[RMDB]
RNA sequence: GGGAACGACUCGAGUAGAGUCGAAAACCUCGGCACAAGGACGAGCCUGGUUUUGAGUGGGGGAGGAUGUUAUGGACAAAUUCCGUAACCAUGUUAGGCCAGCAUUGAAGAGCGUACCUAGCUGCGUUUCAACCUGCGUGGGUUGGGGCGGCUUAGCCACGGUAGAGAUGUUCGCAUCUCUACCGUGAAAAGAAACAACAACAACAAC
Reactivity to 2A3 in 0.01 (KOAc 150mM, MgCl2 10mM, bicine 150mM(pH8.5), 24C), signal-to-noise 4, nucleotides 027 to 156: c000c010u030c060g020g010c030a030c010a050a060g050g030a040c050g030a020g030c000c000u010g010g030u020u040u040u070g050a040g000u080g000g020g010g000g010a020g040g000a020u050g030u040u010a030u050g030g010a030c090a070a140a080u180u000c000c010g030u000a010a010c010c010a050u130g020u060u050a020g020g020c030c040a030g000c020a060u050u130g100a090a030g010a000g010c020g000u020a050c000c010u020a010g000c020u020g010c020g020u010u030u080c020a020a020c010c010u130g120c180g150u300g030g020g000u000u010g000g000g010g000c000g000g020c020u070u100a020g010c030
Reactivity to DMS in 0.01 (KOAc 150mM, MgCl2 10mM, bicine 150mM(pH8.5), 24C), signal-to-noise 1, nucleotides 027 to 156: c020c000u000c130g000g000c020a040c050a100a100g000g020a160c060g000a080g000c050c040u030g000g010u000u000u000u000g010a080g040u000g000g030g030g030g030a130g010g030a110u000g010u000u000a020u000g000g010a100c050a070a040a170u000u000c000c000g010u000a020a060c020c070a060u010g020u010u000a050g010g030c020c010a110g000c060a110u010u000g000a140a140g000a080g020c000g000u000a040c020c050u000a080g020c030u000g010c030g000u000u010u000c010a050a040c020c030u000g000c200g030u000g010g020g000u010u060g010g010g010g010c020g000g000c020u000u000a100g030c080

The record gives the reactivity of an RNA of 207 nucleotides to 2A3 and DMS. Values cover nucleotides 27 to 156. The DMS profile rests on 3,478 reads. 2A3 adducts were read by reverse transcription with SuperScript II with manganese.